[RMDB]
RNA sequence: GGGAACGACUCGAGUAGAGUCGAAAAGAUAUGGACCACUCGAUGAGCUACGUAACAUCUUAUCGGAAACGAUAAGUGGUAGCGAGAGUGUCCUAAGUCAAAAGUGUCUCUGUUCGCAGAGACACAACUAUAACGUUAUCUUCGGAUAACGUUAUAGAAAAGAAACAACAACAACAAC
Reactivity to DMS in 0.01 (KOAc 150mM, MgCl2 10mM, bicine 150mM(pH8.5), 24C), signal-to-noise 9, nucleotides 027 to 126: g000a050u000a300u010g010g000a020c200c070a020c000u000c000g010a180u010g010a270g010c000u000a000c000g000u000a020a070c230a030u010c000u000u000a000u000c000g010g000a110a080a170c010g010a010u000a000a000g010u000g010g000u000a000g000c010g010a090g000a020g020u000g000u000c000c000u000a040a130g010u000c040a080a070a100a120g010u000g010u000c000u000c000u000g000u000u020c210g010c000a010g000a010g000a000c000a000c000a000a110
Reactivity to 2A3 in 0.01 (KOAc 150mM, MgCl2 10mM, bicine 150mM(pH8.5), 24C), signal-to-noise 9, nucleotides 027 to 126: g020a010u080a040u170g010g000a030c110c090a050c140u010c020g300a300u280g160a060g030c000u010a010c010g050u050a040a050c040a300u130c010u000u010a000u000c000g040g020a090a040a040c010g000a010u000a010a010g000u010g010g000u000a000g000c010g030a050g000a000g010u010g000u000c000c000u030a150a030g080u040c050a010a020a080a150g000u010g000u000c000u000c000u010g050u050u090c300g020c100a000g000a000g000a010c000a000c000a000a000